[RMDB]
RNA sequence: GGGAACGACUCGAGUAGAGUCGAAAAAUUAUAUUCCGAGUCGGCCUCCUCGGAUGGGAAAGCAUGCUUGCAUGCCUAUGAAUAGCUACCGCAGUCUUGUACGAGUACAAUCGACCACUGAAUCGAGGUGCUAACCGGCGGCGAUGGCCAAGACGUACACUAGAGAAUCCUUCGGGAUUCUCUAGUGAAAAGAAACAACAACAACAAC
Reactivity to 2A3 in 0.01 (KOAc 150mM, MgCl2 10mM, bicine 150mM(pH8.5), 24C), signal-to-noise 1, nucleotides 027 to 156: a000u190u100a100u000a050u120u020c010c010g000a000g000u070c080g110g000c000c010u020c010c000u030c000g010g000a020u020g000g020g040a200a000a000g000c100a000u000g000c040u120u060g030c020a010u030g000c010c060u140a140u120g060a120a020u030a020g020c010u040a050c010c010g010c010a020g030u030c050u130u160g060u070a060c020g030a010g000u020a030c030a050a180u010c020g040a010c020c010a130c170u040g070a090a000u100c000g000a010g010g000u000g000c000u000a030a060c100c050g010g000c000g010g010c070g070a090u110g010g000c000c000a000a030g070a010c040g100u150a000